[RMDB]
RNA sequence: GGGAACGACUCGAGUAGAGUCGAAAAGCUAAUUUUUGUAUUUUUAGUAGAGAUGGGAUUUUGCCAUGUUGGCUGGGCUGGUCUCAAACUCCCAACCUCAGGUGAUCCGUCUGCCUUGGCCUCCCAAGGCGAGGCUUCUAUUCGUAGAAGCCUCGCCAAAAGAAACAACAACAACAAC
Reactivity to 2A3 in 0.01 (KOAc 150mM, MgCl2 10mM, bicine 150mM(pH8.5), 24C), signal-to-noise 1, nucleotides 027 to 126: g090c150u080a120a240u090u000u100u300u060g300u110a150u030u030u010u090u090a010g000u010a010g000a040g000a110u040g000g070g000a000u000u000u000u270g040c010c110a160u010g170u070u040g090g080c010u000g000g000g030c120u010g000g190u040c100u080c070a000a150a000c000u000c000c000c000a010a010c010c000u040c090a040g000g000u040g110a000u000c040c000g140u120c000u000g030c010c000u000u040g000g000c010c050u060c110c030c000a010a000